[RMDB]
RNA sequence: GGGAACGACUCGAGUAGAGUCGAAAAGUGCAGAUUGAAAUUCAUGGGAGCCUCUCCAUAAUGGAUGAACGCCGCGCUAGUCCGCGCAGUCGCGACGUAAACGCUCUGUCUUCCCGUUCAGGCCUCAGCACGACUAGUGAUUCGUCACUAGUCGUGCAAAAGAAACAACAACAACAAC
Reactivity to DMS in 0.01 (KOAc 150mM, MgCl2 10mM, bicine 150mM(pH8.5), 24C), signal-to-noise 1, nucleotides 027 to 126: g040u020g020c020a070g000a140u020u000g010a070a160a050u010u010c050a040u020g000g010g000a080g000c130c080u000c120u030c020c040a060u000a070a080u010g010g000a080u000g000a120a110c040g000c020c090g000c050g040c030u010a040g010u010c070c090g000c080g020c070a020g020u040c050g010c000g030a020c030g000u000a020a110a170c080g020c090u000c000u010g000u020c080u000u000c010c000c000g010u010u030c160a060g020g010c070c070u000c050a140

Chemical mapping of a 177-nucleotide RNA with DMS. For DMS, 1,051 sequencing reads were counted. The RNA was probed in 150 mM KOAc, 10 mM MgCl2 and 150 mM bicine (pH 8.5) at 24 C. Reactivities are given for positions 27 through 126.